RNA sequence: GGGAACGACUCGAGUAGAGUCGAAAAAACACUUUGUACGUAAUUGAGGCGAAUCCUCGAGCAUCUCGUACUGUUCCGUUUGCGUCUAAAGCUACGGGAGUUGCUCUUGCUAAAGCUGCUGCUCGAACAUUUAUGCCGGUUUCGACCGGCAUAAAUGAAAAGAAACAACAACAACAAC
Reactivity to 2A3 in 0.01 (KOAc 150mM, MgCl2 10mM, bicine 150mM(pH8.5), 24C), signal-to-noise 2, nucleotides 027 to 126: a000a000c170a030c030u250u210u130g010u100a020c080g020u050a060a120u050u080g030a020g010g050c130g070a090a100u130c000c000u010c000g010a000g020c000a060u060c010u030c030g030u080a070c000u060g090u110u040c010c030g000u150u140u130g040c040g040u050c090u120a060a120a060g000c000u010a010c030g000g030g020a020g010u040u120g020c010u020c020u050u040g020c030u110a140a030a010g030c030u040g060c010u010g000c000u030c030g010a050a020
Reactivity to DMS in 0.01 (KOAc 150mM, MgCl2 10mM, bicine 150mM(pH8.5), 24C), signal-to-noise 3, nucleotides 027 to 126: a080a050c090a090c100u000u010u010g010u000a030c070g000u000a100a140u000u010g010a090g000g010c110g010a150a060u010c060c010u000c040g010a030g010c070a090u000c090u000c020g020u000a030c050u020g010u000u000c010c000g010u010u020u010g020c030g030u010c140u000a090a070a140g010c050u000a010c020g000g000g000a030g000u000u000g000c000u000c040u000u010g010c050u000a050a080a090g000c040u000g010c030u000g010c010u000c030g000a080a170